The record gives the reactivity of an RNA of 177 nucleotides to 2A3 and DMS.
Source: RMDB library OK1LIB, as collected in RNAgym.

[RMDB]
RNA sequence: GGGAACGACUCGAGUAGAGUCGAAAAGGAGACGAGUACCCCAUGGCCAUACAGGUUUCGGAUGCGUCGUGUUUUUCUUUGAUGCAUUUGCUUCGGCUUGUCUUGACGGGUGCCAAGUUGAGGGAGGGCUCAGGUAUCAGUUCGCUGAUACCUGAGCAAAAGAAACAACAACAACAAC
Reactivity to 2A3 in 0.01 (KOAc 150mM, MgCl2 10mM, bicine 150mM(pH8.5), 24C), signal-to-noise 3, nucleotides 027 to 126: g070g000a050g020a040c120g020a040g020u090a070c010c020c010c010a040u100g030g010c020c000a030u080a140c040a090g140g000u030u040u130c040g000g020a000u040g030c030g000u020c030g020u070g140u030u190u030u120u050c120u180u190u190g010a020u050g000c020a040u000u000u190g070c060u070u100c100g060g010c050u040u030g000u050c040u020u070g030a050c090g010g000g010u010g000c020c000a060a000g010u050u070g060a110g000g030g010a140g000g070
Reactivity to DMS in 0.01 (KOAc 150mM, MgCl2 10mM, bicine 150mM(pH8.5), 24C), signal-to-noise 2, nucleotides 027 to 126: g000g000a090g000a030c080g000a050g020u000a070c000c030c000c060a130u000g000g000c050c010a030u000a060c110a090g080g010u000u010u000c110g000g000a010u020g000c020g000u010c020g030u070g000u020u000u050u060u070c060u050u000u000g000a000u030g000c000a030u010u000u000g000c200u000u030c100g020g020c060u020u030g000u000c080u000u010g020a210c120g070g010g040u000g000c120c000a060a120g000u020u010g000a230g010g000g020a060g000g000